[RMDB]
RNA sequence: GGGAACGACUCGAGUAGAGUCGAAAAGCUAUACGAGACAGAUCGAACAACAAAGAGAGAUCGAAAAUCUUAGAGGAGAGAACGAAUCUGUCGACUUCACUAGGACAUUGGCGAUCAGAGGUCCAAAGACGAUUCAUGGGUUCGCCUAUGGAUCGUCAAAAGAAACAACAACAACAAC
Reactivity to 2A3 in 0.01 (KOAc 150mM, MgCl2 10mM, bicine 150mM(pH8.5), 24C), signal-to-noise 9, nucleotides 027 to 126: g030c020u060a020u050a180c060g040a020g020a100c010a020g030a030u030c020g040a070a040c020a040a010c010a010a170a010g070a010g010a000g010a020u050c030g040a040a020a010a040u010c010u020u040a030g010a040g110g030a050g010a010g020a080a040c010g020a050a120u040c030u050g040u020c010g030a050c010u060u050c020a030c070u040a030g010g040a010c020a110u040u100g060g010c030g010a010u060c030a020g050a040g070g040u010c010c010a020a030a010
Reactivity to DMS in 0.01 (KOAc 150mM, MgCl2 10mM, bicine 150mM(pH8.5), 24C), signal-to-noise 9, nucleotides 027 to 126: g000c060u010a080u030a080c120g010a190g010a030c050a030g000a030u000c020g010a090a130c060a100a130c200a050a200a140g010a090g010a070g010a050u010c080g010a100a050a080a110u000c010u010u000a020g000a300g010g000a090g000a120g010a080a090c010g010a070a070u010c030u020g000u000c000g000a220c150u010u010c040a060c050u010a040g000g000a040c090a080u020u010g000g000c060g010a040u010c030a060g000a070g000g000u000c010c020a030a070a090
Annotation
Chemical mapping of a 177-nucleotide RNA with 2A3 and DMS. The reactions ran in a buffer of 150 mM KOAc, 10 mM MgCl2 and 150 mM bicine (pH 8.5), at 24 C. It was measured as part of the RMDB library OK1LIB. For 2A3, 60,356 sequencing reads were counted. The DMS profile rests on 52,082 reads.